[RMDB]
RNA sequence: GGGAACGACUCGAGUAGAGUCGAAAAAAUACGGUGCCAGACGACUCUACAUUAUUCGUUUGGCAGACGUAAAAAAGGAGGCAACAAUUAACCCGUAUCGGCUCGCGGUGCAGCAGUGUGGAGACCUUAUUCAUUUAUUAUUCGUAAUAAAUGAAUAAAAAGAAACAACAACAACAAC
Reactivity to 2A3 in 0.01 (KOAc 150mM, MgCl2 10mM, bicine 150mM(pH8.5), 24C), signal-to-noise 9, nucleotides 027 to 126: a000a000u070a000c010g000g020u010g010c000c000a000g000a010c000g020a020c050u070c060u260a120c080a120u120u230a120u210u070c000g000u010u010u000g000g000c000a000g000a020c000g000u030a000a020a010a010a010a060g120g020a020g010g030c040a060a030c010a050a130u130u110a090a060c020c000c000g020u050a070u110c030g020g010c030u020c020g010c020g010g030u040g010c010a020g000c010a020g040u020g030u050g080g030a040g010a030c000c000u000
Reactivity to DMS in 0.01 (KOAc 150mM, MgCl2 10mM, bicine 150mM(pH8.5), 24C), signal-to-noise 9, nucleotides 027 to 126: a070a100u000a000c000g000g010u000g010c010c000a010g000a020c010g000a020c290u020c200u030a120c280a120u030u020a070u010u000c000g000u000u000u000g000g000c010a010g010a070c010g010u000a010a020a060a050a070a080g010g000a070g010g010c040a070a070c090a050a100u020u020a100a110c050c010c010g020u010a070u010c060g000g010c040u010c060g010c060g000g010u010g010c060a050g010c050a040g010u010g010u010g000g010a070g000a070c090c040u000